[RMDB]
This 177-nucleotide RNA was probed chemically with 2A3. Source: RMDB library M2PK50, as collected in RNAgym. Values cover nucleotides 27 to 126. The RNA was probed in 150 mM KOAc, 10 mM MgCl2 and 150 mM bicine (pH 8.5) at 24 C.

RNA sequence: GGGAACGACUCGAGUAGAGUCGAAAACUCAAUGACUUCGGUCAUUGAGAAAGGACAAAAGUCCAACUGAGCAGCUAUGAGCUCAUACAUCGUCAUAGCAAUAAACACACACGUUCGCGUGUGUGAAGAAGCAAUUGUCGUUCGCGACAAUUGCUUCAAAAGAAACAACAACAACAAC
Reactivity to 2A3 in 0.01 (KOAc 150mM, MgCl2 10mM, bicine 150mM(pH8.5), 24C), signal-to-noise 1, nucleotides 027 to 126: c000u010c000a000a000u000g010a010c000u030u050c160g130g020u020c000a000u020u010g000a000g020a050a070a000g040g000a020c040a090a300a040a010g030u000c010c010a010a020c030u040g000a010g000c010a000g020c020u010a010u020g010a000g030c010u080c010a060u210a070c040a050u120c190g030u020c000a010u000a010g000c000a000a000u070a010a020a000c010a000c010a010c000a000c000g030u020u040c300g030c000g100u010g000u000g000u010g020a010a010